[RMDB]
This 177-nucleotide RNA was probed chemically with DMS. The reactions ran in a buffer of 150 mM KOAc, 10 mM MgCl2 and 150 mM bicine (pH 8.5), at 24 C. DMS adducts were read by reverse transcription with MarathonRT.
RNA sequence: GGGAACGACUCGAGUAGAGUCGAAAAGAUAUGGAUAAGAGGGAGGGAGGACCGGGAACGUUUGACGAGCAUCGGAAACGAUGCUCCGAGUUCGACGGUCCAUCGAUCUCCCUCUUAUCCUAAGUCACUAUGUAACAGGGUUCGCCCUGUUACAUAGAAAAGAAACAACAACAACAAC
Reactivity to DMS in 0.01 (KOAc 150mM, MgCl2 10mM, bicine 150mM(pH8.5), 24C), signal-to-noise 4, nucleotides 027 to 126: g010a020u000a300u000g000g000a020u000a000a010g020a030g030g020g020a020g020g010g010a050g040g010a010c000c000g010g000g010a010a010c020g000u000u000u010g020a230c300g000a020g010c000a010u000c000g010g000a110a090a170c010g000a020u010g000c000u000c010c010g000a100g020u000u000c020g020a170c020g020g000u000c000c000a040u000c150g000a040u010c010u000c000c000c000u000c000u000u000a000u000c000c000u000a000a050g000u000c050a300